[RMDB]
The record gives the reactivity of an RNA of 177 nucleotides to DMS and 2A3. The RNA was probed in 150 mM KOAc, 10 mM MgCl2 and 150 mM bicine (pH 8.5) at 24 C. For DMS the reverse transcriptase was MarathonRT. The 2A3 profile rests on 35,639 reads. It was measured as part of the RMDB library M2PK50.

RNA sequence: GGGAACGACUCGAGUAGAGUCGAAAAAGACUUGUAUUCGUACAAGUCUACAGAAAUUUCGCUAGCACACGAUCACACCUAGCGUUCUCAAUAACGAUCCAACAACGUGUCAAUUCGUUGACACGAAGUUUGAUGUUUAAUUCGUUAAACAUCAAACAAAAGAAACAACAACAACAAC
Reactivity to DMS in 0.01 (KOAc 150mM, MgCl2 10mM, bicine 150mM(pH8.5), 24C), signal-to-noise 8, nucleotides 027 to 126: a020g000a010c000u000u000g020u000a020u000u020c170g030u000a020c000a010a010g010u000c000u000a070c170a110g000a090a080a130u000u000u000c010g020c010u000a010g010c200a110c170a090c130g010a040u010c050a130c150a110c170c000u000a020g000c010g000u000u000c000u000c020a090a070u010a060a070c150g000a020u000c050c150a040a060c130a070a150c020g010u000g000u000c000a020a040u000u000c150g010u000u000g010a010c000a000c010g000a030a060
Reactivity to 2A3 in 0.01 (KOAc 150mM, MgCl2 10mM, bicine 150mM(pH8.5), 24C), signal-to-noise 9, nucleotides 027 to 126: a000g000a000c000u000u000g010u010a020u020u090c200g020u030a010c000a000a000g000u000c000u000a000c010a030g220a040a160a050u040u050u030c010g000c010u000a010g020c100a040c020a020c200g110a120u100c040a030c020a030c100c010u000a000g000c000g010u010u000c010u000c000a030a070u170a070a030c090g050a050u030c060c030a030a060c010a040a050c050g000u000g000u000c000a010a020u050u060c200g070u040u000g000a000c000a000c000g000a040a000